[RMDB]
This 207-nucleotide RNA was probed chemically with DMS and 2A3. Source: RMDB library OK3TST, as collected in RNAgym. The DMS profile rests on 4,020 reads. For 2A3 the reverse transcriptase was SuperScript II with manganese. The 2A3 profile rests on 1,665 reads.
RNA sequence: GGGAACGACUCGAGUAGAGUCGAAAACGGUGGUCUCCACUCCGGACGGGGAAGUACUGGCCGACCUGGUCGGCGAGGGCACCAGGUUCGUGGUCGCGCGUGGUGGCCGUGGCGGGUUGGGCAACGCCGCUCUGGUCUCCAGAGCCCGGAAGGCUCCAUUACACAUACUCUUCGGAGUAUGUGUAAUAAAAGAAACAACAACAACAAC
Reactivity to DMS in 0.01 (KOAc 150mM, MgCl2 10mM, bicine 150mM(pH8.5), 24C), signal-to-noise 1, nucleotides 027 to 156: c030g030g010u000g010g030u000c120u000c020c010a080c010u000c050c030g010g040a100c030g000g000g030g010a120a120g010u000a070c050u010g010g010c040c030g030a100c030c100u010g030g030u000c020g000g050c080g000a080g010g000g030c060a180c030c010a060g000g020u000u000c050g040u000g020g030u000c030g030c070g020c110g030u000g020g000u000g010g000c020c010g020u000g000g000c050g000g010g050u010u000g000g030g000c020a080a050c020g000c040c000g020c030u010c030u010g020g000u000c000u000c030c000a080g000a040g000c010c040c040g000g000a090a200g010g000c020u010c030c100
Reactivity to 2A3 in 0.01 (KOAc 150mM, MgCl2 10mM, bicine 150mM(pH8.5), 24C), signal-to-noise 2, nucleotides 027 to 156: c020g020g010u030g040g020u030c040u000c060c020a030c030u010c010c010g050g030a060c050g020g000g000g050a110a070g080u170a100c040u070g090g000c000c030g000a010c020c100u070g080g000u000c030g010g010c050g050a060g010g070g020c070a040c030c010a010g000g110u050u080c080g050u130g060g050u090c050g020c020g020c080g090u090g060g010u010g010g010c030c000g000u040g030g000c070g000g070g000u080u070g050g030g020c060a090a000c050g050c030c000g000c000u000c010u020g020g010u080c110u020c100c000a020g010a020g000c020c000c010g000g030a040a050g050g030c030u040c050c000